[RMDB]
RNA sequence: GGGAACGACUCGAGUAGAGUCGAAAACUCAAUCACUACGGUGAUUGAGAAUGCUUACGCCUCAAUUAAGCUUGAGUCGAGUGCCUCGAGCAGAUAUAGACUGAAACAUUUAGUAUGGUCAAGCAGGGAGCAACAGCUCGAGUACGCUCGAGCUGAAGGUCAUUAGGCUGUUCGCAGCCUAAUGACCAAAAGAAACAACAACAACAAC
Reactivity to 2A3 in 0.01 (KOAc 150mM, MgCl2 10mM, bicine 150mM(pH8.5), 24C), signal-to-noise 1, nucleotides 027 to 156: c000u000c000a000a000u040c000a010c000u020a000c180g060g030u010g000a000u000u000g000a000g000a030a060u100g020c010u040u080a110c050g080c030c000u030c020a120a050u060u300a210a070g030c040u000u010g000a000g000u020c050g040a040g080u090g010c000c010u060c070g020a000g000c040a010g050a010u160a000u060a070g090a080c000u010g130a130a040a000c010a080u080u120u120a020g020u040a050u200g010g010u000c010a020a040g010c050a020g030g030g010a120g000c040a000a090c000a000g000c000u010c000g000a000g000u000a010c160g020c060u000c000g000a000g000c000u010g000a090a010
The record gives the reactivity of an RNA of 207 nucleotides to 2A3.
The data come from the RNA Mapping Database (RMDB), library OK3TST.
The 2A3 profile rests on 541 reads.